Chemical mapping of a 207-nucleotide RNA with 2A3.
The data come from the RNA Mapping Database (RMDB), library OK3TST.
For 2A3 the reverse transcriptase was SuperScript II with manganese.
RNA sequence: GGGAACGACUCGAGUAGAGUCGAAAACAUUUGAUCCUUUUUAUGGCUCAGAGAAAAGUUAAUGAAUACCUUUCGAGUUUGGUGCCACGGCAGUCAUUCCUCAAAGCUGUCAGCACUUAUGGGCUGUCGUCCCCUGGUCACUGCGUGACUUUGGUUACUUGACCAUGUCAUUCGUGACAUGGUCAAGAAAAGAAACAACAACAACAAC
Reactivity to 2A3 in 0.01 (KOAc 150mM, MgCl2 10mM, bicine 150mM(pH8.5), 24C), signal-to-noise 2, nucleotides 027 to 156: c010a020u030u070u300g070a170u140c000c000u060u140u010u150u160a200u210g020g030c020u000c000a020g060a000g080a030a020a120a000g100u150u150a160a090u300g120a060a080u120a080c000c000u010u020u020c030g030a040g100u030u190u220g130g000u050g030c000c010a110c030g000g000c000a000g000u020c010a110u150u080c010c000u090c140a040a030a020g020c050u050g030u010c020a010g000c010a010c010u040u020a100u150g000g010g070c010u020g070u030c000g000u000c000c020c000c000u010g030g000u010c010a060c090u190g020c220g000u000g000a000c000u070u120u020g110g000u030u020a130